[RMDB]
RNA sequence: GGGAACGACUCGAGUAGAGUCGAAAAGCAAAUAUUGUCUUAAUUACUUAGGCUAAAAGAAAUCAGUAUUAAAGCGGGACAAGGCAUCGACAUUUGAUACAAAUAUUGAUCAAUGGAUGUCUUAUUUAAACCUCAUCCGGCUUCGGCCGGAUGAGAAGUACUAACAACGCUUCGGCGUUGUUAGUACAAAAGAAACAACAACAACAAC
Reactivity to 2A3 in 0.01 (KOAc 150mM, MgCl2 10mM, bicine 150mM(pH8.5), 24C), signal-to-noise 2, nucleotides 027 to 156: g010c040a050a080a040u080a120u230u040g010u000c030u060u230a190a140u140u040a090c040u050u110a050g050g000c010u110a150a070a070a000g030a000a150a060u100c020a000g050u040a020u100u070a140a060a000g080c050g060g030g040a010c040a050a030g000g010c000a000u000c020g110a130c060a120u060u100u100g020a010u120a070c070a040a220a000u270a210u230u130g000a010u000c000a000a020u020g010g000a010u000g020u000c010u000u020a030u010u100u020a020a040a000c010c010u000c000a000u000c000c000g030g000c010u000u150c120g100g000c000c000g030g000a000u010g000a000g000a000a000
Background: An RNA of 207 nucleotides, treated with 2A3 and read out base by base. 2A3 adducts were read by reverse transcription with SuperScript II with manganese. The RNA was probed in 150 mM KOAc, 10 mM MgCl2 and 150 mM bicine (pH 8.5) at 24 C.